The data come from the RNA Mapping Database (RMDB), library M2PK50. This 177-nucleotide RNA was probed chemically with DMS and 2A3. The DMS profile rests on 3,974 reads. DMS adducts were read by reverse transcription with MarathonRT. The reactions ran in a buffer of 150 mM KOAc, 10 mM MgCl2 and 150 mM bicine (pH 8.5), at 24 C. Reactivities are given for positions 27 through 126.

[RMDB]
RNA sequence: GGGAACGACUCGAGUAGAGUCGAAAAUACUCACAUUUCGAUGUGAGUAACUGUCUAGUCGCUAGCGCCGAUCAAGCGCUAGGGACUAGACUUUAUUGAUCGCCAGCUAACCUUUCGAGGUUAGCAAACAGAAAGCGAAUUUCGAUUCGCUUUCUGUAAAAGAAACAACAACAACAAC
Reactivity to DMS in 0.01 (KOAc 150mM, MgCl2 10mM, bicine 150mM(pH8.5), 24C), signal-to-noise 3, nucleotides 027 to 126: u000a000c000u000c000a000c000a010u000u000u010c170g010a020u000g010u000g000a040g010u000a040a050c060u000g000u000c000u000a010g010u000c000g000c000u010a000g010c000g010c000c030g010a140u010c300a140a120g000c000g010c000u000a000g000g000g010a010c000u000a000g000a000c000u000u000u000a070u010u010g010a060u000c100g010c050c040a130g020c000u000a000a000c000c000u000u000u010c130g010a020g000g010u000u000a000g010c010a010a070
Reactivity to 2A3 in 0.01 (KOAc 150mM, MgCl2 10mM, bicine 150mM(pH8.5), 24C), signal-to-noise 3, nucleotides 027 to 126: u030a000c000u010c000a000c000a000u040u100u120c190g160a010u010g010u000g000a010g000u000a000a060c020u010g000u000c000u000a010g010u000c010g010c300u000a000g000c010g010c020c000g240a300u200c080a060a030g000c000g000c000u000a010g010g010g000a000c000u000a000g010a000c000u010u020u000a010u010u030g080a050u060c070g090c130c020a010g020c010u000a000a000c000c000u040u070u200c270g100a020g000g010u000u000a000g000c000a000a000